The record gives the reactivity of an RNA of 177 nucleotides to 2A3 and DMS.
[RMDB]
RNA sequence: GGGAACGACUCGAGUAGAGUCGAAAAGCUAACUUUGCGCUAGUUAAUAAAGUGCGAUACUACGGCCAACUUCAACACUUCUUGCGGUCCAACGCACCUCCAUACGAGUUAGUUGGCGGAAAGUGGAUCCUGAAACCGGUUUCGACCGGUUUCAGGAAAAAGAAACAACAACAACAAC
Reactivity to 2A3 in 0.01 (KOAc 150mM, MgCl2 10mM, bicine 150mM(pH8.5), 24C), signal-to-noise 2, nucleotides 027 to 126: g060c000u000a020a110c020u020u000u110g030c000g040c000u040a030g000u070u070a000a060u090a160a220a000g040u010g090c000g020a040u020a060c030u000a030c070g040g000c080c000a060a020c100u200u100c050a190a050c070a000c130u000u200c100u070u280g200c040g000g040u020c050c000a030a030c000g000c000a030c090c000u000c000c000a000u070a300c020g000a000g010u140u070a050g000u040u020g000g000c030g000g060a060a000a000g000u000g120g000a050
Reactivity to DMS in 0.01 (KOAc 150mM, MgCl2 10mM, bicine 150mM(pH8.5), 24C), signal-to-noise 1, nucleotides 027 to 126: g010c040u000a090a000c000u000u000u000g070c040g000c010u000a000g040u000u000a000a020u000a050a090a110g040u000g040c010g000a060u040a080c280u040a080c000g000g030c000c000a190a170c090u010u040c070a270a140c040a000c050u000u000c110u020u010g040c100g030g000u000c090c060a030a110c000g070c140a050c090c000u000c150c130a130u100a030c230g000a090g000u000u000a010g000u000u000g000g000c040g000g000a040a020a020g000u000g000g000a050

For DMS, 1,106 sequencing reads were counted. For 2A3 the reverse transcriptase was SuperScript II with manganese. High DMS reactivity at an A or C suggests that its Watson-Crick edge is free. DMS adducts were read by reverse transcription with MarathonRT. Source: RMDB library OK1LIB, as collected in RNAgym. Conditions: 150 mM KOAc, 10 mM MgCl2 and 150 mM bicine (pH 8.5), 24 C.